Source information: An RNA of 177 nucleotides, treated with 2A3 and DMS and read out base by base. The RNA was probed in 150 mM KOAc, 10 mM MgCl2 and 150 mM bicine (pH 8.5) at 24 C. 2A3 is a SHAPE reagent: it acylates the 2'-hydroxyl of flexible nucleotides of all four kinds.
RNA sequence: GGGAACGACUCGAGUAGAGUCGAAAAUGGACGUUGUUCGCAACGUCCACAUACUGAGACGAACGUUAAACGUAUCGCGGGCAAAAGUGCAGUUAGAAUAAGUACCUAUUGAGUUCGCUCAAUAGAAUCUCGUAAUUUGAUUCGUCAAAUUACGAGAAAAAGAAACAACAACAACAAC
Reactivity to 2A3 in 0.01 (KOAc 150mM, MgCl2 10mM, bicine 150mM(pH8.5), 24C), signal-to-noise 5, nucleotides 027 to 126: u060g010g000a000c000g000u000u020g010u060u070c170g000c090a000a000c000g000u000c000c000a000c000a000u040a000c000u080g040a000g060a090c030g030a080a020c010g040u060u240a120a180a030c030g000u060a100u250c030g010c000g030g070g000c040a080a020a050a030g060u060g040c020a040g020u080u130a050g100a180a100u150a180a020g050u050a060c000c000u000a020u000u020g000a020g020u030u090c200g030c090u010c000a000a000u010a010g050a040a070
Reactivity to DMS in 0.01 (KOAc 150mM, MgCl2 10mM, bicine 150mM(pH8.5), 24C), signal-to-noise 7, nucleotides 027 to 126: u000g010g000a010c010g030u000u000g010u000u010c190g030c000a010a000c010g010u000c000c010a010c120a050u010a090c060u000g010a120g010a100c030g010a030a050c050g010u000u010a050a090a180c040g010u000a080u000c020g020c050g010g000g010c080a030a060a090a080g020u000g000c030a070g010u000u000a070g010a090a090u000a050a100g010u010a100c140c000u000a010u000u000g000a020g020u000u010c180g010c000u000c010a010a010u000a000g000a090a100